[RMDB]
RNA sequence: GGGAACGACUCGAGUAGAGUCGAAAAGAACUUUGCCAGCAGUAUUUUCAGUGCCGGAAUGGAUUUCCUGUUUACCUGGGGAGAAUUCAUCGGGGUGAUCAGCAUGAUUACCCUGUUUGCCCGCGCCUAGCUGACCUUAGUUCGCUAAGGUCAGCUAAAAAGAAACAACAACAACAAC
Reactivity to DMS in 0.01 (KOAc 150mM, MgCl2 10mM, bicine 150mM(pH8.5), 24C), signal-to-noise 1, nucleotides 027 to 126: g000a110a080c120u010u000u000g000c020c000a060g030c050a090g000u010a050u000u040u030u010c080a090g030u000g030c020c020g010g020a190a050u000g020g000a040u000u000u000c040c000u000g020u000u000u020a050c200c060u000g000g010g010g020a050g000a040a050u040u000c080a030u010c010g030g000g000g020u000g000a000u000c000a180g020c200a100u020g010a020u000u000a010c000c000c000u000g000u000u000u000g000c040c000c010g030c170g030c090c100
Description: An RNA of 177 nucleotides, treated with DMS and read out base by base. Reactivities are given for positions 27 through 126. For DMS the reverse transcriptase was MarathonRT.